RNA sequence: GGGAACGACUCGAGUAGAGUCGAAAAAAGCCGUGGAGCCGCCCGGGUAGAAGCGACGCUUCUCCGGACGAAAACCGAUGCCGGGAAUGCCGAGCGCCAGGAUCUGGCUCUGCUGCUUCGGCGUCAAGCAGUCAUUACCAUUCGUGGUAAUGACUGCAAAAGAAACAACAACAACAAC
Reactivity to 2A3 in 0.01 (KOAc 150mM, MgCl2 10mM, bicine 150mM(pH8.5), 24C), signal-to-noise 3, nucleotides 027 to 126: a010a000g010c040c010g010u020g020g010a000g010c000c000g020c010c030c000g000g020g000u200a160g010a270a010g010c030g090a050c070g030c000u000u000c050u000c010c000g000g020a030c020g110a020a120a070a030c080c050g090a070u160g060c020c000g020g000g050a050a090u300g020c000c020g020a010g000c020g000c010c010a030g030g040a080u050c090u290g020g000c010u000c000u000g000c000u000g000c000u040u040c020g100g030c020g030u110c060a080a020
Reactivity to DMS in 0.01 (KOAc 150mM, MgCl2 10mM, bicine 150mM(pH8.5), 24C), signal-to-noise 2, nucleotides 027 to 126: a090a030g010c000c090g010u010g000g010a000g080c050c000g020c300c000c000g000g000g070u000a140g010a070a070g010c020g020a300c300g000c020u000u000c030u030c000c000g070g000a040c050g010a210a120a120a000c300c040g000a130u070g060c020c000g000g000g000a050a000u020g020c090c010g040a270g050c050g020c050c000a020g040g020a050u040c070u080g000g030c000u030c060u020g010c000u000g000c070u030u060c030g000g000c190g000u000c000a030a190
Source: RMDB library OK1LIB, as collected in RNAgym. This 177-nucleotide RNA was probed chemically with 2A3 and DMS. For 2A3, 1,922 sequencing reads were counted.